RNA sequence: GGGAACGACUCGAGUAGAGUCGAAAACGGUCGAAAUUCGUUUCGACCGAAUAUGCUAGCUGAGCACAGCUGCAAUGGUAAGCUGAAAGCCAGCUGCAAGCGCGAGUUCGGCGUUCGCGCCGAACAAUGAAGGUGGAUCUUUCGAGAUCCACCUUCAAAAAGAAACAACAACAACAAC
Reactivity to DMS in 0.01 (KOAc 150mM, MgCl2 10mM, bicine 150mM(pH8.5), 24C), signal-to-noise 1, nucleotides 027 to 126: c100g020g000u000c000g010a000a040a000u000u060c220g050u000u000u000c030g020a010c020c000g010a020a020u000a070u000g020c010u000a010g020c000u000g010a070g020c000a170c000a010g070c020u000g000c020a160a120u000g030g010u010a030a080g000c010u000g000a090a070a050g020c010c010a000g000c020u000g020c070a050a180g000c130g000c120g000a160g000u000u000c000g000g010c000g000u000u000c200g000c040g030c040c010g020a000a000c000a060a120
Record summary: The data come from the RNA Mapping Database (RMDB), library M2PK50. The record gives the reactivity of an RNA of 177 nucleotides to DMS. DMS adducts were read by reverse transcription with MarathonRT. For DMS, 812 sequencing reads were counted.